[RMDB]
RNA sequence: GGGAACGACUCGAGUAGAGUCGAAAACAAGCCAUGAAGACCGGCGCGCUGAUCCGCUUUGCCUGCGAGGCGGGCGCUAUCAUCGCUGGCGCAUCGCAGGAAGACCGGGAGCGCAUGGCGGAAUUCAUAAUCAGGUGGUGUUCGCACCACCUGAUUAAAAAGAAACAACAACAACAAC
Reactivity to DMS in 0.01 (KOAc 150mM, MgCl2 10mM, bicine 150mM(pH8.5), 24C), signal-to-noise 2, nucleotides 027 to 126: c140a120a170g010c040c070a090u000g020a070a040g010a300c010c020g000g000c070g010c020g010c030u000g020a150u000c080c030g020c300u000u000u000g010c000c010u000g020c010g010a010g010g010c000g010g010g000c010g000c210u000a070u030c290a120u010c000g010c010u000g010g000c000g030c000a050u000c000g000c010a020g010g010a070a010g010a020c100c010g010g000g010a050g010c030g020c010a060u000g020g000c010g020g000a080a150u010u000c030a060

The record gives the reactivity of an RNA of 177 nucleotides to DMS. Values are in units of 0.01, from 0 to 300, in steps of 10. DMS adducts were read by reverse transcription with MarathonRT. DMS (dimethyl sulfate) methylates the pairing face of unpaired adenines and cytosines. Values cover nucleotides 27 to 126. The reactions ran in a buffer of 150 mM KOAc, 10 mM MgCl2 and 150 mM bicine (pH 8.5), at 24 C.